[RMDB]
RNA sequence: GGGAACGACUCGAGUAGAGUCGAAAAGAGUAACCAACAAUGUGAUCUUGCUUGCGGAGGCAAGACUUGCACAGUAUCAAAUCUGCAAGUAGUGCUAUUGUUGGAAAGAAUACUGUGAAGUCAACAACCUAAUGCGGGCAUUCGUGCCCGCAUUAGGAAAAGAAACAACAACAACAAC
Reactivity to 2A3 in 0.01 (KOAc 150mM, MgCl2 10mM, bicine 150mM(pH8.5), 24C), signal-to-noise 2, nucleotides 027 to 126: g160a000g040u140a060a090c030c010a000a000c000a010a010u230g120u020g300a300u160c020u010u040g000c000u000u000g000c000g060g040a060g010g000c050a190a030g020a000c010u000u050g000c000a010c010a040g070u120a010u100c190a030a060a160u030c010u000g000c000a000a000g000u010a000g100u020g090c000u000a010u000u000g020u000u000g000g010a000a030a000g000a040a040u120a020c010u010g000u000g090a000a010g000u050c010a000a010c030a010a080
Reactivity to DMS in 0.01 (KOAc 150mM, MgCl2 10mM, bicine 150mM(pH8.5), 24C), signal-to-noise 1, nucleotides 027 to 126: g000a160g020u000a080a300c000c000a000a000c060a000a000u010g000u000g030a100u030c040u040u000g000c040u000u000g010c010g070g000a020g000g000c300a090a070g010a050c070u030u000g010c090a020c070a000g000u000a110u000c100a000a130a040u000c030u000g000c010a000a010g000u020a000g000u060g040c000u000a010u060u020g000u000u000g000g000a000a080a070g050a140a020u050a040c100u000g000u000g000a080a000g040u070c020a130a030c200a080a070